[RMDB]
The record gives the reactivity of an RNA of 177 nucleotides to 2A3 and DMS.
The 2A3 profile rests on 13,762 reads.
2A3 adducts were read by reverse transcription with SuperScript II with manganese.
Conditions: 150 mM KOAc, 10 mM MgCl2 and 150 mM bicine (pH 8.5), 24 C.
It was measured as part of the RMDB library TTRINS.
DMS adducts were read by reverse transcription with MarathonRT.

RNA sequence: GGGAACGACUCGAGUAGAGUCGAAAAGAUAUGGAUUCCACAGCUUGGAUUUACAGAGUGUUGGCAAUGCCACUCGGAAACGAGUGGUGACCAACACUCUGUUGUCAGCUGCUGGAAUCCUAAGUCACUAGUUACACUAGUUCGCUAGUGUAACUAGAAAAGAAACAACAACAACAAC
Reactivity to 2A3 in 0.01 (KOAc 150mM, MgCl2 10mM, bicine 150mM(pH8.5), 24C), signal-to-noise 5, nucleotides 027 to 126: g050a000u090a050u200g010g010a010u020u000c010c000a000c000a010g050c030u270u300g250g030a180u300u300u190a020c020a000g030a000g000u000g000u010u000g000g000c090a110a100u240g030c000c000a010c000u000c010g030g030a140a090a030c010g000a010g020u010g010g000u020g020a010c010c000a000a000c000a000c000u010c010u000g000u000u000g000u000c000a000g010c000u010g010c190u000g000g000a000a000u000c000c000u000a050a020g000u000c000a010
Reactivity to DMS in 0.01 (KOAc 150mM, MgCl2 10mM, bicine 150mM(pH8.5), 24C), signal-to-noise 5, nucleotides 027 to 126: g010a040u000a300u000g000g000a020u000u000c010c000a050c010a010g010c010u000u000g040g010a020u010u010u000a010c010a000g000a020g010u000g000u000u010g000g010c130a140a130u010g000c000c000a010c000u010c010g000g010a140a110a240c010g000a020g040u000g000g010u000g000a050c010c000a000a000c000a000c000u000c000u000g010u000u000g010u000c010a020g000c000u000g000c300u000g020g000a020a000u000c000c000u000a010a060g010u000c030a300